RNA sequence: GGGAACGACUCGAGUAGAGUCGAAAAGUGGGUCCCCUCUGCCGUGGAAGGGUUGCCGUGGUUGGGCAGAACCAUCAGCUCGCCCACACAGCGCCAGCAGGGCACAGAGGUGAUGUAGAGGCGCGGGUCUGGGAUGGGACUUACGCCCCGAAAGCGGCAAUUAGGCUAUCUUCGGAUAGCCUAAUUGAAAAGAAACAACAACAACAAC
Reactivity to DMS in 0.01 (KOAc 150mM, MgCl2 10mM, bicine 150mM(pH8.5), 24C), signal-to-noise 2, nucleotides 027 to 156: g020u010g010g000g040u010c000c010c010c030u000c010u000g000c010c070g040u000g010g000a120a070g000g030g010u010u000g050c020c050g050u000g020g050u010u000g020g000g010c090a140g020a050a090c010c040a100u000c090a140g010c020u000c020g020c010c010c010a080c020a050c030a050g020c010g010c020c000a160g030c040a170g000g020g040c030a100c080a120g010a110g010g000u000g020a080u010g020u000a100g000a100g020g020c040g020c030g020g010g000u000c040u020g000g010g030a140u000g010g000g010a090c020u010u000a060c030g010c010c010c000c070g020a040a100a120g010c030g010g030
Reactivity to 2A3 in 0.01 (KOAc 150mM, MgCl2 10mM, bicine 150mM(pH8.5), 24C), signal-to-noise 4, nucleotides 027 to 156: g050u060g020g020g020u030c000c020c020c010u000c010u010g020c030c020g120u040g040g050a110a090g010g050g000u090u210g040c060c020g030u030g030g040u100u070g060g030g030c050a030g050a090a080c040c010a060u090c000a020g020c010u030c030g010c000c010c000a020c000a000c020a020g020c010g000c030c000a040g040c040a030g060g100g000c050a020c010a060g170a050g040g080u040g010a020u060g030u090a050g050a070g050g020c040g000c080g040g020g010u060c070u080g060g000g040a050u040g020g020g010a000c000u000u040a020c030g010c000c000c010c000g110a150a070a000g070c060g030g000
Description: Chemical mapping of a 207-nucleotide RNA with DMS and 2A3. The reactions ran in a buffer of 150 mM KOAc, 10 mM MgCl2 and 150 mM bicine (pH 8.5), at 24 C. DMS adducts were read by reverse transcription with MarathonRT. High 2A3 reactivity points to a flexible backbone, as in loops and unpaired stretches.